An RNA of 177 nucleotides, treated with DMS and 2A3 and read out base by base. For 2A3 the reverse transcriptase was SuperScript II with manganese.

RNA sequence: GGGAACGACUCGAGUAGAGUCGAAAAGACGUGUGGUGAAUGCUCGAAAGAGAUCUGCGAUCUCACUUCCAAUGAGUGUGUGCAAGAGUUAUACAAGAAUACUUCCUUGGCACUGGAAAGGAUGAACGAUGAUUAUGCACUUCGGUGCAUAAUCAUCAAAAGAAACAACAACAACAAC
Reactivity to DMS in 0.01 (KOAc 150mM, MgCl2 10mM, bicine 150mM(pH8.5), 24C), signal-to-noise 3, nucleotides 027 to 126: g010a060c070g010u020g010u000g000g020u030g000a050a060u060g000c040u010c020g000a110a090a030g000a020g020a030u000c010u000g040c220g000a020u000c010u000c010a140c070u000u000c030c050a120a070u000g010a090g000u000g000u000g020u000g000c040a050a070g000a070g000u040u020a070u030a080c250a150a170g000a120a040u030a040c040u000u000c050c030u000u000g000g030c050a040c020u000g040g000a030a000a150g000g000a030u030g000a020a060c220
Reactivity to 2A3 in 0.01 (KOAc 150mM, MgCl2 10mM, bicine 150mM(pH8.5), 24C), signal-to-noise 5, nucleotides 027 to 126: g050a060c050g070u070g030u090g040g080u080g110a080a060u180g040c010u020c060g040a110a160a010g040a000g020a050u070c070u140g120c120g050a100u020c000u000c030a030c010u040u010c000c010a040a160u300g010a050g110u150g000u010g010u040g100c020a010a010g030a000g020u070u100a120u030a120c080a090a000g050a100a060u110a100c050u140u160c040c000u020u040g020g000c030a030c030u040g050g060a040a160a010g060g050a110u090g020a030a020c080

For DMS, 3,725 sequencing reads were counted.